Structure probing data (2A3 and DMS) for a 177-nucleotide construct. Reactivities are rounded to 0.1 and cut off at 0 and 3.
RNA sequence: GGGAACGACUCGAGUAGAGUCGAAAAGUAUAUAGCGAUAAUAUAUGCGAUAAUAUAUUAUCGCGCGGCGCGCCGCUAUUAUCGCCGCAUAUAUAUACGCGCGGCGUAUGCGAUAGCGUAUGCGCGCUCUCAUAGUUGUCUUCGGACAACUAUGAGAAAAAGAAACAACAACAACAAC
Reactivity to 2A3 in 0.01 (KOAc 150mM, MgCl2 10mM, bicine 150mM(pH8.5), 24C), signal-to-noise 2, nucleotides 027 to 126: g090u030a100u020a040u130a260g000c000g000a000u000a000a000u000a000u000a010u020g020c020g010a040u090a300a010u000a020u000a000u000u000a010u000c000g020c010g000c010g000g010c000g030c010g010c010c000g000c000u010a020u050u020a030u030c000g000c030c010g060c030a000u070a000u010a000u010a010u040a070c130g050c010g010c000g060g010c020g040u080a030u100g160c130g020a020u030a010g010c000g010u060a120u100g010c000g000c000g010c010
Reactivity to DMS in 0.01 (KOAc 150mM, MgCl2 10mM, bicine 150mM(pH8.5), 24C), signal-to-noise 4, nucleotides 027 to 126: g020u010a080u000a100u010a090g000c000g010a010u000a010a010u000a020u000a000u000g010c130g000a150u010a110a040u000a010u000a000u000u000a000u000c000g010c000g020c270g010g000c000g020c050g030c040c030g010c010u000a010u000u000a050u000c000g000c000c010g010c010a040u000a060u010a130u000a160u010a090c220g010c120g000c000g010g020c000g020u000a010u000g020c150g010a020u010a010g010c000g020u010a070u000g010c000g010c010g020c010
The data come from the RNA Mapping Database (RMDB), library OK2TRN.
The RNA was probed in 150 mM KOAc, 10 mM MgCl2 and 150 mM bicine (pH 8.5) at 24 C.